[RMDB]
RNA sequence: GGGAACGACUCGAGUAGAGUCGAAAACCAAUGGGAAACCAUUGGCAACUCGGAAACGAGUUGAACCGGGAAUUAGCGUGUAAACCGGCGACAAUGCGAUUUUAAGCAUUGUCGAUUACGCCCAUGUCGAUUUUAAGACAUGGAGCGAAACACGCAAGGAACUAUCACCGUUCGCGGUGGUGGUUCCAAAAGAAACAACAACAACAAC
Reactivity to DMS in 0.01 (KOAc 150mM, MgCl2 10mM, bicine 150mM(pH8.5), 24C), signal-to-noise 4, nucleotides 027 to 156: c000c000a020a010u000g010g010g010a240a100a200c010c000a020u010u000g010g010c000a020a010c010u000c010g010g020a180a150a280c020g020a050g010u000u000g020a080a120c010c000g020g000g000a170a160u000u010a110g020c000g010u000g010u000a060a110a180c070c030g000g020c010g000a020c010a000a010u000g020c010g010a300u000u000u020u000a140a300g000c000a010u000u000g020u000c000g000a090u000u000a050c020g010c000c010c000a010u010g020u000c000g000a250u020u010u000u010a140a230g000a020c040a010u010g010g000a060g030c000g000a060a100a020c020a010c010g000c010a160a300
Reactivity to 2A3 in 0.01 (KOAc 150mM, MgCl2 10mM, bicine 150mM(pH8.5), 24C), signal-to-noise 7, nucleotides 027 to 156: c000c000a000a000u000g000g000g020a040a020a040c000c000a000u000u000g000g000c000a000a000c000u000c000g010g020a060a060a050c000g000a000g000u000u000g010a040a030c010c000g000g000g030a080a180u170u090a080g000c010g000u010g000u000a020a030a030c000c000g000g000c000g000a000c000a000a000u000g010c030g140a200u020u050u090u300a120a010g000c000a000u000u000g000u000c000g000a000u000u010a030c000g000c000c000c000a000u000g000u000c020g050a130u060u100u080u300a100a020g000a000c000a000u000g000g000a010g000c000g000a010a000a000c000a000c000g000c000a000a020